[RMDB]
RNA sequence: GGGAACGACUCGAGUAGAGUCGAAAAAGCUUGUAGUUGCAAUACAUCGGCGGUUAAGCGCGCUGUAUCGUAAGCACGGAAACCCCAAACACUAUCAAAUUCAGCAUCCAAUGGGUGCAUUUGCUUGUGGUGGAAACCCAAUACAUAACAGUAAUUAAACAAAUGGGACAUUCGUGUCCCAUUUGUUAAAAGAAACAACAACAACAAC
Reactivity to DMS in 0.01 (KOAc 150mM, MgCl2 10mM, bicine 150mM(pH8.5), 24C), signal-to-noise 1, nucleotides 027 to 156: a070g050c070u000u000g000u020a070g030u000u010g000c020a060a140u000a120c020a090u000c080g020g030c040g090g000u000u000a050a150g000c010g080c020g030c120u040g020u000a030u000c130g020u000a080a050g050c010a020c020g000g000a060a100a100c020c000c000c020a000a060a160c040a040c090u000a060u000c010a020a030a080u010u000c090a070g050c030a020u000c000c010a150a110u020g050g000g000u000g020c010a140u000u000u000g030c240u000u000g040u010g010g000u000g000g020a110a120a090c030c010c000a020a140u000a080c090a030u020a090a170c010a160g020u000a000a110u000u000a000
Reactivity to 2A3 in 0.01 (KOAc 150mM, MgCl2 10mM, bicine 150mM(pH8.5), 24C), signal-to-noise 2, nucleotides 027 to 156: a000g150c190u230u070g060u090a080g140u050u070g000c060a040a020u020a020c000a000u000c010g060g040c040g000g090u210u210a290a160g020c050g000c000g000c040u020g030u050a000u000c000g000u020a030a030g000c000a020c050g070g000a140a050a040c000c020c000c030a190a110a030c000a000c060u050a050u100c020a000a000a070u140u080c030a000g000c000a000u020c010c000a180a250u280g000g010g000u000g000c030a020u000u000u000g010c040u000u010g030u040g040g020u000g000g070a070a030a030c000c000c000a030a020u140a030c120a060u170a060a000c020a030g200u180a170a170u210u300a080

Source: RMDB library OK3TST, as collected in RNAgym. An RNA of 207 nucleotides, treated with DMS and 2A3 and read out base by base. The DMS profile rests on 1,578 reads. The 2A3 profile rests on 645 reads. For 2A3 the reverse transcriptase was SuperScript II with manganese. For DMS the reverse transcriptase was MarathonRT. The reactions ran in a buffer of 150 mM KOAc, 10 mM MgCl2 and 150 mM bicine (pH 8.5), at 24 C.